[RMDB]
RNA sequence: GGGAACGACUCGAGUAGAGUCGAAAACUGGACGAAUACUGGGCCCGGCUGGAGUAUGCCUGCCUUAGCAAACCGGUGGCGAUGCGGUACUGCUGGCCGGCCAAGCGUGCGCCGGAGGUGGUGUCGCCGUUGAUAAGCGAUUCGUCGCUUAUCAACGAAAAGAAACAACAACAACAAC
Reactivity to 2A3 in 0.01 (KOAc 150mM, MgCl2 10mM, bicine 150mM(pH8.5), 24C), signal-to-noise 2, nucleotides 027 to 126: c000u020g040g050a020c010g050a120a040u060a210c060u060g010g000g000c000c060c090g000g020c040u050g070g010a130g080u140a050u120g020c000c020u030g010c010c000u080u090a020g020c070a090a040a150c040c000g040g040u040g010g050c020g030a050u160g010c010g000g010u000a000c020u010g050c020u050g140g220c000c020g000g000c020c010a010a010g140c070g170u150g010c120g000c010c000g030g020a050g020g030u050g000g000u010g010u000c020g020c020
Reactivity to DMS in 0.01 (KOAc 150mM, MgCl2 10mM, bicine 150mM(pH8.5), 24C), signal-to-noise 3, nucleotides 027 to 126: c050u000g010g010a040c070g010a090a090u010a100c050u010g010g010g010c060c050c110g020g020c040u000g000g000a100g000u000a060u010g000c040c020u000g020c040c030u000u000a090g000c090a050a120a090c080c030g000g010u010g000g010c080g010a080u000g010c040g010g010u000a040c030u000g030c020u000g010g010c010c010g010g010c000c060a070a090g010c130g020u010g020c170g010c010c020g020g000a300g010g000u000g000g010u000g010u000c030g020c020
The record gives the reactivity of an RNA of 177 nucleotides to 2A3 and DMS.
Source: RMDB library OK2TRN, as collected in RNAgym.
The 2A3 profile rests on 2,574 reads.
2A3 adducts were read by reverse transcription with SuperScript II with manganese.
Reactivities are given for positions 27 through 126.
Conditions: 150 mM KOAc, 10 mM MgCl2 and 150 mM bicine (pH 8.5), 24 C.